[RMDB]
RNA sequence: GGGAACGACUCGAGUAGAGUCGAAAAAAGGCUAUUAUUGAGCAGUACCAUUCUGCUUAAGUGAUGCGGAUUUUGACAGAAACCGUGUGGUAAAAGUGCGGUCCUGUUUGGUAUGUAGUACAUCGGGCCGUUAAGAAUGAUUCGUCAUUCUUAACGGAAAAGAAACAACAACAACAAC
Reactivity to DMS in 0.01 (KOAc 150mM, MgCl2 10mM, bicine 150mM(pH8.5), 24C), signal-to-noise 9, nucleotides 027 to 126: a080a090g000g000c010u000a040u000u010a060u000u000g000a010g010c000a030g010u000a100c150c110a160u020u020c060u010g020c000u000u000a030a100g020u010g000a040u000g000c000g000g010a210u000u000u010u010g010a090c210a080g010a060a070a040c020c010g020u000g020u000g010g020u010a060a070a060a100g010u000g010c100g000g000u000c060c010u000g000u000u000u000g000g010u000a020u010g010u000a050g000u000a080c070a050u010c050g000g000g010
Reactivity to 2A3 in 0.01 (KOAc 150mM, MgCl2 10mM, bicine 150mM(pH8.5), 24C), signal-to-noise 7, nucleotides 027 to 126: a000a000g120g000c040u070a070u150u010a050u070u100g000a000g000c000a000g020u050a130c020c020a050u150u070c030u130g020c000u040u020a060a020g050u050g130a040u070g010c010g010g040a040u030u060u040u150g120a080c070a060g070a060a010a000c000c000g000u030g000u040g070g090u110a110a140a030a030g060u070g040c060g000g000u010c000c000u010g020u010u060u050g020g010u050a080u180g040u030a040g020u020a020c020a080u060c060g010g070g000